[RMDB]
RNA sequence: GGGAACGACUCGAGUAGAGUCGAAAAAUGCACAACUAUGGUAUUGUUGUCUUCUGUGUAUCACUUGUAUGUCUUCAAUCAGGUCUUAUCAAGUGAUGUUAUGUUUGAAGAUGCCCAAGGUUUGAAAGUAGGUAGCCGUUCGCGGCUACCAAAAGAAACAACAACAACAAC
Reactivity to DMS in 0.01 (KOAc 150mM, MgCl2 10mM, bicine 150mM(pH8.5), 24C), signal-to-noise 1, nucleotides 027 to 129: a000u060g030c100a120c080a090a090c130u070a140u010g050g040u070a090u050u030g050u000u040g050u010c070u060u000c060u020g030u060g060u000a020u020c060a000c010u000u000g000u000a120u040g010u020c000u020u030c100a110a110u040c220a080g000g000u040c040u020u060a150u050c020a070a050g010u060g000a040u000g000u020u060a090u040g070u000u000u070g000a030a040g020a000u040g000c140c030c020a010a080g000g010u000u000u000g030a100a070a060g020u060a050
Reactivity to 2A3 in 0.01 (KOAc 150mM, MgCl2 10mM, bicine 150mM(pH8.5), 24C), signal-to-noise 3, nucleotides 027 to 129: a020u150g080c000a000c000a190a080c020u050a010u240g110g000u000a050u000u100g010u020u060g030u000c060u030u010c000u020g110u000g050u080a000u060c000a000c000u000u040g010u000a020u090g000u050c040u150u040c140a180a160u100c010a000g130g040u040c030u090u080a070u210c000a020a020g020u000g090a000u000g000u060u160a010u080g160u000u060u070g010a000a000g000a000u090g000c000c000c090a080a000g080g000u050u050u130g180a120a100a000g050u090a060
Chemical mapping of a 170-nucleotide RNA with DMS and 2A3.
The reactions ran in a buffer of 150 mM KOAc, 10 mM MgCl2 and 150 mM bicine (pH 8.5), at 24 C.
It was measured as part of the RMDB library 15KLIB.
For 2A3 the reverse transcriptase was SuperScript II with manganese.
For DMS the reverse transcriptase was MarathonRT.